Notes: Structure probing data (DMS and 2A3) for a 177-nucleotide construct. For 2A3, 1,871 sequencing reads were counted. The DMS profile rests on 2,014 reads. Reactivities are rounded to 0.1 and cut off at 0 and 3. DMS adducts were read by reverse transcription with MarathonRT.
[RMDB]
RNA sequence: GGGAACGACUCGAGUAGAGUCGAAAAGGAUCCUCUCACAGGAUUGUCUCUGUGUUCCGAAACUCCAACAGUAUUGCUUCGGGACGCCUACAGCAAUACUGUAGGUAUAGAGAGUAGGAGAGGAUCGCGAUAUGGUAGGCUUCGGCCUACCAUAUCGAAAAGAAACAACAACAACAAC
Reactivity to DMS in 0.01 (KOAc 150mM, MgCl2 10mM, bicine 150mM(pH8.5), 24C), signal-to-noise 3, nucleotides 027 to 126: g000g000a000u000c000c000u000c000u000c010a160c150a190g010g000a150u000u000g000u020c030u000c010u000g010u000g020u020u000c000c000g020a040a050a040c060u050c190c130a100a150c140a090g030u020a250u000u000g010c100u000u000c120g010g010g010a050c080g000c010c000u000a020c040a010g000c050a100a080u010a300c010u000g000u000a010g000g000u000a030u000a020g020a030g000a030g010u000a100g000g000a040g010a000g000g000a000u000c010g010
Reactivity to 2A3 in 0.01 (KOAc 150mM, MgCl2 10mM, bicine 150mM(pH8.5), 24C), signal-to-noise 2, nucleotides 027 to 126: g060g000a000u000c020c020u000c010u030c030a220c060a090g170g110a300u130u230g150u020c000u050c000u030g050u000g000u050u040c020c000g000a020a020a020c070u100c050c030a130a060c060a210g180u170a140u190u120g040c030u040u020c000g020g010g000a010c000g040c020c000u020a020c020a020g060c040a060a120u030a300c000u000g000u000a010g030g010u000a000u100a030g040a000g000a000g040u110a050g040g030a000g000a000g000g000a000u000c000g030